[RMDB]
RNA sequence: GGGAACGACUCGAGUAGAGUCGAAAAGCAACCCGAGAGUGAGAUGAACGACAAGGGGCGAAGAUCCUCGGAAGGAAUUCUCCCAAGAAGCGAAGAGAACACAAGAAUCGGAAGUCUUCCCGAAGACGAGGGAGGCUCUUCGGAGCCUCCAAAAGAAACAACAACAACAAC
Reactivity to 2A3 in 0.01 (KOAc 150mM, MgCl2 10mM, bicine 150mM(pH8.5), 24C), signal-to-noise 3, nucleotides 027 to 129: g040c030a020a060c000c000c000g030a050g000a010g000u080g020a090g040a080u130g060a070a020c040g080a010c020a080a080g030g010g000g010c060g020a010a020g040a080u060c000c040u000c010g070g010a000a030g020g040a000a000u130u000c030u000c000c000c000a080a030g030a070a000g050c020g020a010a020g010a000g010a050a000c020a000c000a130a040g020a100a020u040c000g020g030a020a020g050u000c030u010u000c010c010c010g020a050a040g060a040c080g040a070g000
Reactivity to DMS in 0.01 (KOAc 150mM, MgCl2 10mM, bicine 150mM(pH8.5), 24C), signal-to-noise 4, nucleotides 027 to 129: g000c100a030a210c000c030c030g000a040g000a010g080u020g020a050g020a040u050g070a000a000c040g040a100c140a180a090g010g000g000g010c230g000a110a030g000a110u000c030c130u010c000g010g030a120a000g000g060a100a050u040u000c070u000c010c030c030a150a180g000a120a030g060c270g050a130a050g060a000g000a000a010c100a080c230a160a040g040a010a100u000c040g000g060a000a070g000u030c080u000u000c040c010c010g040a110a050g040a060c070g000a070g040
The data come from the RNA Mapping Database (RMDB), library 15KLIB. An RNA of 170 nucleotides, treated with 2A3 and DMS and read out base by base. Reactivities are given for positions 27 through 129. DMS (dimethyl sulfate) methylates the pairing face of unpaired adenines and cytosines. The 2A3 profile rests on 3,837 reads. The RNA was probed in 150 mM KOAc, 10 mM MgCl2 and 150 mM bicine (pH 8.5) at 24 C. The DMS profile rests on 5,084 reads.